[RMDB]
RNA sequence: GGGAACGACUCGAGUAGAGUCGAAAACAUAGCGUUUCACAAUGUGCGCCAUUAACAUUGUUUACGCAAGCACGUUUCGCAAUGUACGGCGCAGAAACAUUGCCAACACAAAUACGCUUCACGAUGUAAAACAUCGGUGCGUUCGCGCACCGAUGAACUAAUAUUCCGGGUUCGCCCGGAAUAUUAGAAAAGAAACAACAACAACAAC
Reactivity to 2A3 in 0.01 (KOAc 150mM, MgCl2 10mM, bicine 150mM(pH8.5), 24C), signal-to-noise 4, nucleotides 027 to 156: c040a070u100a020g010c020g020u050u110u110c100a050c000a040a000u020g020u020g020c000g000c000c020a040u140u200a050a020c010a010u020u000g020u040u050u050a020c010g010c060a150a040g040c110a040c100g010u050u100u100c050g010c010a010a000u000g020u020a020c080g000g000c000g010c020a000g040a000a080a000c020a000u000u000g010c030c060a150a030c070a050c030a110a190a050u180a070c020g030c000u080u190c170a070c110g080a090u120g060u260a030a090a080a000c000a010u000c000g000g000u000g000c000g000u020u040c240g000c000g000c010a000c020c050g000a000u000g000a000a000
Reactivity to DMS in 0.01 (KOAc 150mM, MgCl2 10mM, bicine 150mM(pH8.5), 24C), signal-to-noise 2, nucleotides 027 to 156: c040a130u000a090g030c010g010u000u000u000c110a060c000a090a120u000g030u000g020c000g020c030c030a220u030u000a110a130c010a040u000u010g000u020u040u000a010c000g000c000a110a180g020c070a100c010g060u050u000u000c110g020c030a040a020u000g010u000a070c090g030g030c030g070c010a050g000a200a100a140c050a000u000u000g020c000c010a040a100c100a180c060a060a120a150u000a040c060g000c020u000u000c020a110c040g000a190u000g010u020a080a100a110a190c010a000u000c000g060g050u000g060c000g060u000u000c250g030c040g060c000a040c020c000g000a000u000g010a040a070